[RMDB]
RNA sequence: GGGAACGACUCGAGUAGAGUCGAAAACAAACAAGCCAAAAGGCAAGGAUACCCCUUCUCAAGCAUUGUUAGGUUUAUGGGCUACCAGUAAGCGAAAAAUGAUACAGGACGAAAAAAACAUAAUUCGGAUAUAAUCUUAGUUCGCUAAGAUUAUAUCAAAAGAAACAACAACAACAAC
Reactivity to 2A3 in 0.01 (KOAc 150mM, MgCl2 10mM, bicine 150mM(pH8.5), 24C), signal-to-noise 9, nucleotides 027 to 126: c030a010a070a010c010a020a030g020c020c010a090a200a050a060g030g010c040a030a040g040g000a030u110a130c010c010c000c000u050u020c040u020c050a090a040g010c010a060u020u060g040u090u100a060g030g060u030u050u070a040u070g030g020g030c020u030a060c010c020a030g040u060a040a010g020c020g100a070a030a010a020a040u110g030a010u050a080c050a030g060g030a010c050g090a060a010a010a020a010a030a010c110a030u190a100a100u140u060c030g040
Reactivity to DMS in 0.01 (KOAc 150mM, MgCl2 10mM, bicine 150mM(pH8.5), 24C), signal-to-noise 8, nucleotides 027 to 126: c070a050a060a210c200a080a120g020c010c020a080a090a110a130g010g020c020a050a090g010g000a120u030a050c030c020c010c020u010u000c010u000c030a110a110g010c060a060u010u010g010u010u000a070g000g010u010u000u010a050u000g020g000g000c040u020a050c050c010a060g010u010a050a060g010c040g000a010a050a060a050a040u010g000a100u010a050c090a060g000g010a180c060g010a000a000a030a080a070a060a080c100a070u020a040a110u010u000c110g000
Source: RMDB libraries RFM100 and RFMREP, as collected in RNAgym. Structure probing data (2A3 and DMS) for a 177-nucleotide construct. Values cover nucleotides 27 to 126. The RNA was probed in 150 mM KOAc, 10 mM MgCl2 and 150 mM bicine (pH 8.5) at 24 C. DMS (dimethyl sulfate) methylates the pairing face of unpaired adenines and cytosines. For DMS the reverse transcriptase was MarathonRT.